[RMDB]
RNA sequence: GGGAACGACUCGAGUAGAGUCGAAAACUAUCUUCAGCAAGAAAUGCUUUAGUCAACUUUUUUAAUAAGAUUUCUGCUUUGUUCACAGGAAAGUCUGUGCCUCAGGAUUUUGAUGAGGCCAAGACUCACUUAAGGGCAAGUUCGCUUGCCCUUAAGUAAAAGAAACAACAACAACAAC
Reactivity to DMS in 0.01 (KOAc 150mM, MgCl2 10mM, bicine 150mM(pH8.5), 24C), signal-to-noise 1, nucleotides 027 to 126: c050u000a040u010c060u000u010c070a050g000c070a030a140g000a060a050a020u020g000c040u000u000u000a130g020u010c150a070a140c050u000u000u000u030u010u020a040a150u020a030a080g010a060u000u000u000c000u000g000c010u020u010u020g020u000u000c180a100c100a090g020g000a040a080a060g010u000c000u010g020u000g020c010c000u000c000a040g000g000a160u000u000u000u000g000a070u010g020a010g000g020c000c050a020a040g030a010c030u010c110
Reactivity to 2A3 in 0.01 (KOAc 150mM, MgCl2 10mM, bicine 150mM(pH8.5), 24C), signal-to-noise 1, nucleotides 027 to 126: c020u040a110u180c090u150u220c080a000g020c040a000a160g060a240a040a040u230g120c020u060u090u070a020g050u170c040a010a200c060u290u270u070u160u210u210a080a140u060a080a020g000a040u080u060u000c000u040g020c020u100u000u120g030u100u100c080a050c050a110g140g100a100a000a000g000u000c030u010g100u160g090c000c000u040c010a050g090g100a300u110u090u250u300g190a130u000g000a000g000g000c010c000a040a020g000a000c000u000c030
The data come from the RNA Mapping Database (RMDB), library OK2TST. Structure probing data (DMS and 2A3) for a 177-nucleotide construct. The 2A3 profile rests on 521 reads. Values are in units of 0.01, from 0 to 300, in steps of 10. 2A3 adducts were read by reverse transcription with SuperScript II with manganese. For DMS the reverse transcriptase was MarathonRT.